[RMDB]
RNA sequence: GGGAACGACUCGAGUAGAGUCGAAAACAAUGCAGGUUAAGCCAAAGGGAUGUCCCGACCGGAGGCCGACAAUCCAGGGAACCGGAUGUCAUCACGUUGGUGCAGUACCAGAUGGCAUCUUAAAUCCAAAAGAACACAUAGUUCGCUAUGUGUUCAACAUCCUUACAGUGUUCGCACUGUAAGGAUGAAAAGAAACAACAACAACAAC
Reactivity to 2A3 in 0.01 (KOAc 150mM, MgCl2 10mM, bicine 150mM(pH8.5), 24C), signal-to-noise 5, nucleotides 027 to 156: c110a050a170u200g060c050a060g130g020u130u130a080a010g010c000c000a020a020a030g010g000g000a030u050g060u040c000c010c000g010a010c000c000g000g010a030g010g000c000c000g000a020c040a080a070u090c070c060a040g000g050g010a020a070c030c030g010g000a000u010g010u000c000a010u010c010a020c280g080u130u180g010g000u090g050c090a080g140u170a050c010c000a000g000a010u000g010g000c000a000u000c000u010u020a010a020a010u020c020c000a050a060a030a040g000a000a000c000a000c000a000u000a000g010u050u040c160g020c140u000a000u000g000u000g000u000u000c000a010a000
Reactivity to DMS in 0.01 (KOAc 150mM, MgCl2 10mM, bicine 150mM(pH8.5), 24C), signal-to-noise 3, nucleotides 027 to 156: c070a110a090u000g010c040a110g000g040u000u000a030a080g040c010c010a040a300a300g000g000g000a050u000g000u000c000c020c020g030a300c030c000g000g010a300g000g000c010c010g000a100c080a090a130u020c050c030a090g040g020g020a090a060c120c130g000g000a020u000g000u000c000a030u000c020a070c230g040u000u020g000g020u010g020c070a180g030u000a060c020c000a240g000a050u010g010g000c000a010u000c000u000u000a030a070a140u000c020c020a030a040a080a140g010a020a030c010a000c000a020u010a040g000u000u010c290g030c000u010a000u010g000u010g000u000u000c010a070a090

Structure probing data (2A3 and DMS) for a 207-nucleotide construct. The DMS profile rests on 3,964 reads. Conditions: 150 mM KOAc, 10 mM MgCl2 and 150 mM bicine (pH 8.5), 24 C. For 2A3 the reverse transcriptase was SuperScript II with manganese. Reactivities are given for positions 27 through 156.